[RMDB]
RNA sequence: GGGAACGACUCGAGUAGAGUCGAAAAUGAUCGACCUGGCAACUCGGAUGCCGCGAGUGUUGGCGGACACGCCGGUGAUUGUGCGUGGGGCAAUGACCGGGCUGCUGGCCCGGCCGAAUUCCAAGGCAGGAGAAGGUAGAUUCGUCUACCUUCUCCUAAAAGAAACAACAACAACAAC
Reactivity to DMS in 0.01 (KOAc 150mM, MgCl2 10mM, bicine 150mM(pH8.5), 24C), signal-to-noise 4, nucleotides 027 to 126: u020g000a290u000c060g010a060c020c020u000g020g010c060a120a080c060u010c030g010g000a110u000g010c030c030g010c060g000a070g020u000g010u000u000g010g030c030g010g000a140c080a040c100g010c010c040g010g010u000g000a120u010u000g010u010g020c050g030u010g000g000g010g010c050a070a070u010g010a040c000c010g000g000g010c010u000g020c240u010g020g010c000c010c000g000g010c020c000g000a070a080u010u000c020c020a090a110g020g020c180
Reactivity to 2A3 in 0.01 (KOAc 150mM, MgCl2 10mM, bicine 150mM(pH8.5), 24C), signal-to-noise 1, nucleotides 027 to 126: u080g030a040u030c040g000a030c000c000u000g030g090c020a080a080c040u000c160g070g020a090u110g010c000c000g020c020g040a050g010u160g050u070u160g090g020c050g000g050a040c010a050c080g040c010c000g000g000u110g050a230u100u140g060u100g040c080g030u060g010g030g080g000c050a060a050u060g020a030c000c000g010g010g060c000u090g060c050u130g060g010c020c000c040g030g000c000c000g010a020a060u070u040c040c000a020a060g020g050c030